RNA sequence: GGGAACGACUCGAGUAGAGUCGAAAAGCUCAGUGACAACGGAAGGCGCAUUACCGAGGUAUUAGUAGAUAGCACCGCGCUGGAGAUAUCGUACAUGGCUGACCAGGAGAAACUGGCGGAGCUCUUGGAGGAAAUCAGCCGUAUCACGCAAGAGGUAGAGUACCCAGUAAUUCGUUACUGGGUACUCAAAAGAAACAACAACAACAAC
Reactivity to DMS in 0.01 (KOAc 150mM, MgCl2 10mM, bicine 150mM(pH8.5), 24C), signal-to-noise 2, nucleotides 027 to 156: g010c040u010c000a100g000u000g000a100c090a080a080c020g010g030a090a100g050g040c040g060c060a150u010u000a040c020c020g010a120g010g010u000a080u000u020a110g000u000a110g010a060u000a070g010c020a050c050c050g000c050g030c040u000g000g010a160g000a080u010a030u000c020g000u010a070c020a080u000g010g020c000u000g010a080c020c000a020g030g010a090g020a030a040a020c030u000g010g000c000g010g000a240g000c020u000c020u010u000g020g000a300g020g000a050a060a230u020c010a020g020c000c010g000u000a010u000c030a050c090g000c100a060a080g000a080g000g050u000a220
Reactivity to 2A3 in 0.01 (KOAc 150mM, MgCl2 10mM, bicine 150mM(pH8.5), 24C), signal-to-noise 4, nucleotides 027 to 156: g030c000u020c050a030g020u020g070a020c070a140a030c070g010g020a060a050g050g010c010g010c030a050u060u120a100c000c050g020a060g030g010u120a080u140u060a130g050u020a030g060a160u040a040g030c040a030c050c060g000c000g000c050u010g060g000a060g020a040u100a040u110c030g010u020a030c020a080u080g020g000c000u010g010a080c000c000a000g010g000a020g010a030a140a050c060u060g090g000c040g050g010a020g010c000u000c010u040u020g020g060a060g020g150a010a070a100u040c010a000g010c000c000g010u030a010u060c050a030c040g010c030a060a040g020a000g060g070u090a060